An RNA of 207 nucleotides, treated with 2A3 and read out base by base. Values are in units of 0.01, from 0 to 300, in steps of 10. For 2A3, 457 sequencing reads were counted.
RNA sequence: GGGAACGACUCGAGUAGAGUCGAAAAUUCGGUCCUCUGGAGCGGACCGUGUGCUCCGUCAGGAUGUGGAGGUUUCGCGCCCUCCUCUGCGCGUAUGUACAUCGAUACGGUUAUGUCGCCUUUGUGUCGGCGUUUGACACUUACACAUACCGGAUAACCAUAUCGGAGCUUUCGAGCUCCGAUAUGGAAAAGAAACAACAACAACAAC
Reactivity to 2A3 in 0.01 (KOAc 150mM, MgCl2 10mM, bicine 150mM(pH8.5), 24C), signal-to-noise 1, nucleotides 027 to 156: u060u010c010g030g030u000c000c000u110c050u230g210g040a080g000c090g000g000a010c010c040g040u060g000u040g000c020u000c050c020g110u140c020a000g040g040a030u000g000u020g050g030a080g030g020u000u000u030c040g020c000g000c000c000c000u000c040c010u000c030u050g100c020g010c040g000u130a080u050g030u000a020c010a170u080c080g130a190u080a210c230g040g000u100u020a040u010g070u070c030g020c050c030u000u010u000g250u050g000u050c010g000g170c000g000u020u100u180g000a000c010a000c000u020u000a000c000a000c000a000u050a290c000c040g000g000a070u020a020a030